This 207-nucleotide RNA was probed chemically with 2A3. Source: RMDB library M2RFPK, as collected in RNAgym. For 2A3 the reverse transcriptase was SuperScript II with manganese. The RNA was probed in 150 mM KOAc, 10 mM MgCl2 and 150 mM bicine (pH 8.5) at 24 C.
RNA sequence: GGGAACGACUCGAGUAGAGUCGAAAACCUACCCAAGGUGAAAGCUCCUUCUCUCGCAAUGUGUAACUCAUUAUUCUCAUGACCCCUGGUUGGAGAGAUCCGGACUAGGAGCCAGGGGGCCUCUGAUAAAGCCAGACGCACUUCGGUGCGUCUGGAAGGUAGAUGAUAUCUUCGGAUAUCAUCUACCAAAAGAAACAACAACAACAAC
Reactivity to 2A3 in 0.01 (KOAc 150mM, MgCl2 10mM, bicine 150mM(pH8.5), 24C), signal-to-noise 2, nucleotides 027 to 156: c000c000u000a030c020c010c000a070a050g000g020u070g090a150a030a010g030c010u030c000c020u090u040c020u010c000u040c000g030c050a060a080u100g030u020g030u130a050a110c040u000c060a030u030u160a220u250u060c080u070c080a050u160g080a110c000c000c000c000u010g000g060u080u100g060g050a090g000a040g020a080u050c070c080g100g080a090c050u090a080g040g010a010g000c000c000a020g010g000g040g000g010c000c020u060c080u020g080a130u170a190a070a000g030c000c000a000g010a000c000g030c000a010c010u050u050c160g040g010u020g000c010g000u000c000u000g000g000a000a000